[RMDB]
Structure probing data (2A3 and DMS) for a 207-nucleotide construct. The RNA was probed in 150 mM KOAc, 10 mM MgCl2 and 150 mM bicine (pH 8.5) at 24 C. Reactivities are rounded to 0.1 and cut off at 0 and 3. The data come from the RNA Mapping Database (RMDB), library OK3TST. The DMS profile rests on 17,153 reads.
RNA sequence: GGGAACGACUCGAGUAGAGUCGAAAAACAGUGGGAUAAACAAAGUGAAAGAGGCUUUCUUUCUUCCUAACUAAGGCGCUUUGUGUGUCUCCAACACAAGAAAGGAAAUGCAACAUUUCCAAAAUGUAUCUGCCUGCAGGAGGCCUCUGUGAUGCUGCAUUACGUUUAAGUUCGCUUAAACGUAAUGAAAAGAAACAACAACAACAAC
Reactivity to 2A3 in 0.01 (KOAc 150mM, MgCl2 10mM, bicine 150mM(pH8.5), 24C), signal-to-noise 7, nucleotides 027 to 156: a010c050a020g040u100g030g040g020a050u120a090a150a030c050a060a130a040g050u090g110a130a080a040g010a010g020g000c010u080u110u000c010u050u200u060c000u080u080c020c020u060a110a100c070u090a060a040g030g000c020g000c070u040u110u070g010u000g000u000g030u030c040u030c090c010a070a010c020a000c000a040a030g050a140a060a010g020g020a020a010a000u060g060c130a160a060c020a240u010u000u030c000c000a010a070a030a060u170g020u030a080u030c040u080g010c010c010u040g010c040a010g000g020a000g020g000c000c000u000c000u000g030u030g000a080u100g020c030u030g000
Reactivity to DMS in 0.01 (KOAc 150mM, MgCl2 10mM, bicine 150mM(pH8.5), 24C), signal-to-noise 6, nucleotides 027 to 156: a070c050a080g030u000g010g010g010a050u000a080a060a090c030a070a060a110g020u000g010a080a060a060g010a040g040g020c020u000u010u000c020u000u010u000c050u000u000c020c020u000a090a140c100u010a080a080g020g030c050g020c030u000u000u000g020u000g010u000g010u000c040u000c090c050a130a090c060a050c030a040a070g010a220a120a190g010g010a030a030a020u010g010c120a110a140c090a080u000u010u000c020c030a030a050a070a080u010g010u000a060u000c040u000g010c020c010u000g030c150a090g010g010a030g050g030c000c010u000c020u040g010u010g010a090u000g010c020u000g000

For 2A3, 5,936 sequencing reads were counted.